The data come from the RNA Mapping Database (RMDB), library OK1LIB. This 177-nucleotide RNA was probed chemically with 2A3.

RNA sequence: GGGAACGACUCGAGUAGAGUCGAAAACACACACUAGGGUUCUUCUGAUAGAACCCAGCUCAACAUUCUGAUGUAAUUGUUGACAUAGAUCUUUCAUCAGGAGAACUAUGUAAGUGUGUGGAUACAAGAUAGUAUUCUCUUUCGAGAGGAUGCUAUCAAAAGAAACAACAACAACAAC
Reactivity to 2A3 in 0.01 (KOAc 150mM, MgCl2 10mM, bicine 150mM(pH8.5), 24C), signal-to-noise 3, nucleotides 027 to 126: c020a000c000a000c000a000c030u090a060g100g000g030u000u000c000u010u010c030u030g030a040u050a140g010a020a020c020c010c010a000g000c030u000c000a000a000c000a000u050u020c040u130g200a120u110g070u190a030a050u140u120g000u000u000g000a000c000a000u300a040g150a250u000c030u000u090u090c020a040u000c000a010g020g000a010g000a000a000c020u050a060u170g180u110a090a050g000u000g000u000g000u000g000g000a040u100a070c130a090a140